This 177-nucleotide RNA was probed chemically with DMS and 2A3.
RNA sequence: GGGAACGACUCGAGUAGAGUCGAAAAUUAAAGCGCGAAAAAGAUCGAUCGAUCGUUUGAACGCGCAAGUCGAAGUUUGAUACGGGCAUACUAGCUAGCUAGCUAGCAAAACAAUCUUCGUAAAAAACGAGUCUUACUGAUUCGUCAGUAAGACUCGAAAAGAAACAACAACAACAAC
Reactivity to DMS in 0.01 (KOAc 150mM, MgCl2 10mM, bicine 150mM(pH8.5), 24C), signal-to-noise 3, nucleotides 027 to 126: u010u000a120a110a130g020c000g020c000g000a070a110a020a050a070g000a010u000c000g010a160u020c180g000a010u000c000g010u010u020u000g020a130a100c000g010c000g020c000a050a040g020u000c020g000a030a030g000u000u000u000g000a080u000a120c180g010g030g030c130a120u010a090c020u000a030g000c020u000a130g020c210u010a070g010c020u000a030g000c060a030a080a050a070c020a020a010u000c000u000u020c010g000u020a000a020a040a040a040a060
Reactivity to 2A3 in 0.01 (KOAc 150mM, MgCl2 10mM, bicine 150mM(pH8.5), 24C), signal-to-noise 2, nucleotides 027 to 126: u160u110a150a050a010g000c000g000c000g040a070a060a000a030a020g010a000u030c060g060a110u130c130g010a010u000c080g060u020u100u080g060a140a010c010g000c010g000c020a000a010g040u000c010g010a020a000g000u010u040u020g110a120u150a160c080g120g010g000c040a010u040a180c010u010a000g040c000u010a030g180c030u030a010g000c000u000a000g010c030a020a080a030a020c000a000a000u010c000u020u000c000g030u060a000a110a010a030a000a030
Notes
The DMS profile rests on 2,482 reads. Conditions: 150 mM KOAc, 10 mM MgCl2 and 150 mM bicine (pH 8.5), 24 C.